[RMDB]
RNA sequence: GGGAACGACUCGAGUAGAGUCGAAAACACACGCUAGGCAAUACGACCGCUCCAUAUCUGCCGAAUGAUGCCAAUGUAUGGUGCCUACUGUCCAACGUAACCGUUAAUCGCUGCCUUGGCGGCGAUUCUAGAAUGCUUCGUUCGCGAAGCAUUCUAGAAAAGAAACAACAACAACAAC
Reactivity to 2A3 in 0.01 (KOAc 150mM, MgCl2 10mM, bicine 150mM(pH8.5), 24C), signal-to-noise 7, nucleotides 027 to 126: c060a000c000a000c010g040c040u040a020g060g000c020a020a070u050a070c070g040a030c040c030g030c020u030c020c000a030u030a080u100c040u060g020c020c010g050a060a100u130g040a040u100g020c020c020a070a060u120g030u050a080u090g090g030u050g020c000c000u050a060c030u050g020u030c020c020a040a020c070g060u050a040a050c040c010g030u030u130a040a010u020c000g000c010u000g000c000c020u150u230g100g000c000g010g000c000g000a000u000u010
Reactivity to DMS in 0.01 (KOAc 150mM, MgCl2 10mM, bicine 150mM(pH8.5), 24C), signal-to-noise 2, nucleotides 027 to 126: c130a110c160a070c060g010c060u000a080g020g020c030a100a060u010a070c100g000a080c080c120g000c040u000c090c050a070u010a050u030c030u000g000c040c020g010a070a060u050g020a080u000g000c020c020a110a130u020g000u030a090u000g010g000u010g040c020c000u000a040c060u010g000u000c030c040a110a140c100g020u000a020a100c060c020g000u010u020a080a060u000c010g000c010u000g000c000c040u030u030g030g010c020g020g010c000g010a000u000u000